RNA sequence: GGGAACGACUCGAGUAGAGUCGAAAAGGAGUAUAGUUAUACGGUCAAUAUGGAGAUGUCUAAUGGAAUCCAAUUUACUCCAAUUUGAAAGAGCCGGGUUGAUUAAACUGCUCCAUUCUGGGGCAGAGUAUCAUUUACCAUUCGUGGUAAAUGAUACAAAAGAAACAACAACAACAAC
Reactivity to DMS in 0.01 (KOAc 150mM, MgCl2 10mM, bicine 150mM(pH8.5), 24C), signal-to-noise 4, nucleotides 027 to 126: g000g020a030g020u000a020u000a080g010u010u000a110u010a120c180g010g000u000c070a070a080u000a100u010g000g010a080g010a100u010g000u010c030u010a080a050u000g020g010a070a100u000c040c060a090a060u000u000u000a030c010u000c000c000a040a300u010u000u000g010a020a090a130g010a300g000c050c030g000g000g000u000u000g010a110u000u010a050a150a230c000u000g000c000u010c000c010a110u010u010c240u020g010g010g000g010c020a010g000a070
Reactivity to 2A3 in 0.01 (KOAc 150mM, MgCl2 10mM, bicine 150mM(pH8.5), 24C), signal-to-noise 3, nucleotides 027 to 126: g010g020a000g010u050a040u090a090g050u220u060a130u030a200c050g050g010u050c060a070a030u090a120u230g070g010a100g030a090u120g120u110c050u120a170a090u160g050g040a070a030u050c010c020a060a050u070u030u040a020c010u000c000c000a010a050u000u010u080g070a130a120a040g030a000g020c070c010g080g010g050u000u030g040a150u130u160a120a150a100c010u010g000c010u000c020c010a060u260u070c090u300g000g000g000g000c000a000g000a020